[RMDB]
RNA sequence: GGGAACGACUCGAGUAGAGUCGAAAAUAGUAAGGGUAAGUAAGGUAGCUUCGUGAUGACAAAUUUUAAUUUGGUGCGUAGUUGUCCCCGAUCUUCUAUGAUGAUAGGUACUUUAGAAGACUUCAGGUGUUUACCCAAGUCUUGGAAGCUAACACUAGUCAUGAGGAUGAUUCGUCAUCCUCAUGACAAAAGAAACAACAACAACAAC
Reactivity to 2A3 in 0.01 (KOAc 150mM, MgCl2 10mM, bicine 150mM(pH8.5), 24C), signal-to-noise 2, nucleotides 027 to 156: u180a030g050u050a040a000g000g010g010u010a020a110g030u000a020a030g050g000u010a000g000c000u030u040c020g020u060g030a090u070g020a040c050a060a090a100u110u220u190u210a090a200u120u080u050g040g010u080g030c060g000u010a050g010u040u050g020u030c000c030c000c000g020a060u000c010u030u020c000u070a100u100g090a020u010g050a050u060a060g010g090u140a090c000u090u040u090a080g000a110a010g020a020c020u040u010c140a000g000g060u000g080u050u070u030a000c000c000c020a000a110g020u040c050u020u030g040g020a050a020g000c080u070a070a010c060a090c100u090a020
Reactivity to DMS in 0.01 (KOAc 150mM, MgCl2 10mM, bicine 150mM(pH8.5), 24C), signal-to-noise 1, nucleotides 027 to 156: u010a130g030u010a080a030g020g000g000u010a030a080g020u020a030a100g010g020u000a050g040c020u010u000c060g020u000g030a090u000g030a130c030a040a040a140u010u030u000u020a070a140u010u000u000g030g020u010g010c030g020u000a150g010u000u000g030u000c010c000c000c030g040a040u000c000u000u010c030u010a100u020g010a090u020g000a240u000a070g000g000u000a070c040u010u000u010a090g010a040a050g010a030c040u000u000c110a020g050g010u000g000u000u000u000a060c010c020c020a050a150g010u010c070u000u000g030g000a090a060g010c010u020a040a030c120a020c070u000a150

An RNA of 207 nucleotides, treated with 2A3 and DMS and read out base by base. DMS adducts were read by reverse transcription with MarathonRT. The reactions ran in a buffer of 150 mM KOAc, 10 mM MgCl2 and 150 mM bicine (pH 8.5), at 24 C. It was measured as part of the RMDB library OK3TST. The 2A3 profile rests on 750 reads.